[RMDB]
RNA sequence: GGGAACGACUCGAGUAGAGUCGAAAAUCAUUGGCUUCGCUGCGCGCUGCGUUGCCUAGGCUUCAGAUGCUUCGUACUGUUGCCAACGUUGCAAUUUCCAAACGCUAAUGCGAAAGUGUGCUAACAAUGUCUUGUAUUAUUUCGAUAAUACAAGACAAAAAGAAACAACAACAACAAC
Reactivity to 2A3 in 0.01 (KOAc 150mM, MgCl2 10mM, bicine 150mM(pH8.5), 24C), signal-to-noise 6, nucleotides 027 to 126: u100c020a020u010u100g030g000c020u050u010c020g020c040u090g020c010g000c000g000c030u020g000c010g030u010u020g000c000c000u020a050g000g000c000u020u010c010a040g060a220u100g060c050u120u130c060g060u060a070c010u020g020u040u010g000c010c010a030a030c060g040u060u110g030c030a040a060u040u060u040c010c000a030a070a000c020g020c030u100a150a050u200g010c020g030a050a010a030g040u060g020u030g040c030u090a140a060c050a110a100
Reactivity to DMS in 0.01 (KOAc 150mM, MgCl2 10mM, bicine 150mM(pH8.5), 24C), signal-to-noise 9, nucleotides 027 to 126: u010c080a130u010u010g010g010c020u000u000c030g010c020u000g010c140g010c080g010c040u010g010c100g010u000u000g010c010c020u000a170g010g010c010u000u000c030a030g010a140u010g010c120u000u010c130g010u000a100c050u000g010u000u000g000c010c010a060a130c250g000u000u000g010c080a050a110u000u000u000c050c050a070a090a110c050g010c020u000a070a120u010g010c020g000a060a040a070g010u000g010u000g010c040u010a070a090c200a070a110
About this RNA:
An RNA of 177 nucleotides, treated with 2A3 and DMS and read out base by base. For 2A3, 11,818 sequencing reads were counted. For DMS the reverse transcriptase was MarathonRT. The RNA was probed in 150 mM KOAc, 10 mM MgCl2 and 150 mM bicine (pH 8.5) at 24 C. For 2A3 the reverse transcriptase was SuperScript II with manganese.